[RMDB]
RNA sequence: GGGAACGACUCGAGUAGAGUCGAAAAGAAAUUACGUUUCCUUUACACUUCUCAAACCGGGAUCAAGAGAAGUAAAGCAUCCCUCAUAUCCACGAUGGAGGGUGUCGUGGAGUAUACUGUACCAAAAAGAGCGAACACGGCUUCGGCCGUGUUCGAACUUGUCUGUUAACUUCGGUUAACAGACAAGAAAAGAAACAACAACAACAAC
Reactivity to 2A3 in 0.01 (KOAc 150mM, MgCl2 10mM, bicine 150mM(pH8.5), 24C), signal-to-noise 4, nucleotides 027 to 156: g020a000a050a010u220u130a040c070g000u000u020u010c000c000u030u050u070a070c070a030c010u020u000c010u010c070a180a080a050c060c050g010g030g010a020u030c040a240a050g010a010g000a020a010g040u140a030a000a000g030c000a010u020c000c020c000u050c070a100u100a050u110c000c000a010c010g010a010u020g080g080a040g050g040g010u050g010u010c000g000u000g010g000a010g020u010a010u010a040c090u080g110u140a090c050c080a050a050a030a030a070g100a040g050c010g000a010a010c000a000c020g000g000c000u020u050c130g050g000c000c010g000u000g000u000u010c000g000a000a000
Reactivity to DMS in 0.01 (KOAc 150mM, MgCl2 10mM, bicine 150mM(pH8.5), 24C), signal-to-noise 1, nucleotides 027 to 156: g000a050a030a040u000u000a050c150g000u000u000u000c030c010u000u020u040a120c090a130c000u000u000c010u040c000a060a100a180c090c010g040g040g030a040u010c100a160a300g010a070g010a040a040g030u040a040a040a070g000c060a060u000c000c010c000u010c040a080u010a050u000c020c040a020c080g040a040u010g060g020a050g040g000g020u000g000u000c040g010u000g010g020a090g020u010a070u000a070c080u000g000u000a160c070c080a030a040a080a140a090g000a110g010c000g010a010a080c000a010c000g040g000c000u000u000c300g030g040c050c000g030u000g000u000u010c000g000a010a030
Notes: Structure probing data (2A3 and DMS) for a 207-nucleotide construct. Reactivities are rounded to 0.1 and cut off at 0 and 3. Source: RMDB library M2RFPK, as collected in RNAgym. For DMS, 1,738 sequencing reads were counted. For DMS the reverse transcriptase was MarathonRT. For 2A3, 2,931 sequencing reads were counted.